RNA sequence: GGGAACGACUCGAGUAGAGUCGAAAACAGAACUAAUUCGUUAGUUCUGGCAUAUAACCUUCACCAAUUAGGUUCAAAUAAGUGGUAAAAAUAAAAUUAAAACGGGGUCUGCAUUCGUGCAGACCAAGUAUAGGAGAGAAUUCGUUCUCUCCUAUACAAAAGAAACAACAACAACAAC
Reactivity to 2A3 in 0.01 (KOAc 150mM, MgCl2 10mM, bicine 150mM(pH8.5), 24C), signal-to-noise 3, nucleotides 027 to 126: c000a000g010a000a000c000u010a000a030u090u120c150g050u020u030a010g000u020u000c000u010g010g000c060a120u300a020u050a090a020c000c000u010u000c030a010c020c000a000a020u050u030a050g040g000u100u160c070a070a020a130u040a130a040g020u030g030g000u060a050a060a030a040a110u140a040a130a040a060u180u170a100a130a060a040c030g260g000g080g000u000c000u000g000c000a020u070u070c160g070u030g000c000a000g000a000c000c000a000a000
Reactivity to DMS in 0.01 (KOAc 150mM, MgCl2 10mM, bicine 150mM(pH8.5), 24C), signal-to-noise 3, nucleotides 027 to 126: c020a020g010a010a000c000u010a000a020u000u010c200g010u000u000a010g010u010u000c000u000g000g010c210a090u020a070u020a050a020c010c000u000u000c040a050c010c010a020a080u000u010a020g000g010u000u000c260a040a040a010u010a000a050g010u010g000g010u000a040a090a080a060a110u020a070a070a080a090u020u010a040a050a070a100c090g020g030g010g010u000c000u010g020c000a060u000u010c170g000u000g010c000a000g000a000c000c000a010a030
Structure probing data (2A3 and DMS) for a 177-nucleotide construct. For DMS the reverse transcriptase was MarathonRT. The data come from the RNA Mapping Database (RMDB), library M2PK50.